[RMDB]
RNA sequence: GGGAACGACUCGAGUAGAGUCGAAAAUUGUGGUCUAGACCUUGGCGUAGUAUCCAAGGUUGUCAAGGUUCCUAUUGACUUAACAAUGAUUGAGUUUAUGUUAUGGUGUAAGGAUGGACAGGGGAAAUGCCAAUAGGCGAUUCGUCGCCUAUUGGCAAAAAGAAACAACAACAACAAC
Reactivity to DMS in 0.01 (KOAc 150mM, MgCl2 10mM, bicine 150mM(pH8.5), 24C), signal-to-noise 2, nucleotides 027 to 126: u000u000g010u000g040g010u020c030u000a130g010a010c010c000u000u000g000g000c220g010u000a150g030u020a090u000c030c040a030a020g000g030u000u000g010u000c030a060a070g010g010u000u000c030c000u010a060u010u010g000a030c000u000u020a030a020c080a050a090u000g000a060u020u010g000a170g010u000u000u000a030u010g000u000u000a070u000g000g010u000g000u010a040a070g010g000a070u000g010g020a040c100a060g010g000g010g000a060a110a080

The data come from the RNA Mapping Database (RMDB), library M2PK90. Structure probing data (DMS) for a 177-nucleotide construct. Reactivities are given for positions 27 through 126. The RNA was probed in 150 mM KOAc, 10 mM MgCl2 and 150 mM bicine (pH 8.5) at 24 C.